[RMDB]
RNA sequence: GGGAACGACUCGAGUAGAGUCGAAAAAGGAGCUGGAAGCACGUCUGAAAGAAGCGCGUGAAGCCGGUGCGCGUCAUGUGCUGAUUGCCACCGAUGGUGUGUUCUCAAUGGACGGCGUGAUUGCCAAUAUCCUCCUCUUGUUCGCAAGAGGAGGAUAAAAAGAAACAACAACAACAAC
Reactivity to DMS in 0.01 (KOAc 150mM, MgCl2 10mM, bicine 150mM(pH8.5), 24C), signal-to-noise 3, nucleotides 027 to 126: a100g020g010a110g020c130u000g000g020a100a070g010c010a020c030g010u010c010u010g010a210a060a060g020a150a060g000c020g010c000g030u010g010a070a080g040c020c020g000g010u020g000c160g020c000g000u000c010a020u000g010u000g010c040u000g000a150u000u010g000c070c020a020c020c030g010a120u010g030g020u000g010u000g010u000u000c040u000c090a080a070u000g000g010a130c160g000g000c010g000u000g000a070u000u000g020c010c010a050a180
Reactivity to 2A3 in 0.01 (KOAc 150mM, MgCl2 10mM, bicine 150mM(pH8.5), 24C), signal-to-noise 2, nucleotides 027 to 126: a000g170g020a050g010c090u060g050g000a080a010g040c010a000c010g010u000c060u080g020a100a050a040g030a030a000g030c040g030c010g000u060g050a040a010g000c010c040g250g100u160g010c220g000c000g020u040c000a020u110g050u030g030c020u030g000a020u000u270g050c000c000a010c010c020g070a070u090g040g000u040g000u000g020u080u020c090u020c000a030a140u180g040g000a010c030g000g000c000g000u020g010a080u070u070g080c010c020a030a010